[RMDB]
RNA sequence: GGGAACGACUCGAGUAGAGUCGAAAAACGAGUACGCCAUACGUGGCGUACUCGAGAAGCUUUGUACUUCGGCUAAGGUGCUGCUACGGUUACGGGACAACACCUUGGCUAGGUACAAUGCUCAAAACAUACCCGAUAACUUCGGUUAUCGGGUAUGAAAAGAAACAACAACAACAAC
Reactivity to 2A3 in 0.01 (KOAc 150mM, MgCl2 10mM, bicine 150mM(pH8.5), 24C), signal-to-noise 6, nucleotides 027 to 126: a010c010g000a000g000u000a000c000g000c010c000a040u050a070c300g100u040g000g000c000g000u000a000c000u000c000g000a010g010a000a000g000c010u020u000u020g000u000a000c010u040u080c160g010g000c000u000a010a000g010g000u000g000c010u010g000c030u090a170c050g050g050u260u140a100c060g030g020g120a070c010a020a000c000a010c000c000u000u000g000g000c000u000a000g010g000u000a000c000a000a000u030g000c010u030c040a090a110a010a000
Reactivity to DMS in 0.01 (KOAc 150mM, MgCl2 10mM, bicine 150mM(pH8.5), 24C), signal-to-noise 3, nucleotides 027 to 126: a100c010g010a010g020u000a000c000g010c000c010a040u010a090c190g020u010g010g020c010g000u000a000c000u010c000g000a050g000a100a010g020c010u000u020u000g020u000a020c000u000u000c130g020g000c010u010a020a010g000g020u000g010c060u000g010c060u020a150c000g000g010u030u090a090c040g010g000g000a220c010a000a020c000a000c000c000u010u000g010g000c000u000a000g000g020u000a010c010a000a000u000g000c000u020c050a070a040a080a170
Chemical mapping of a 177-nucleotide RNA with 2A3 and DMS. For DMS the reverse transcriptase was MarathonRT. Values cover nucleotides 27 to 126.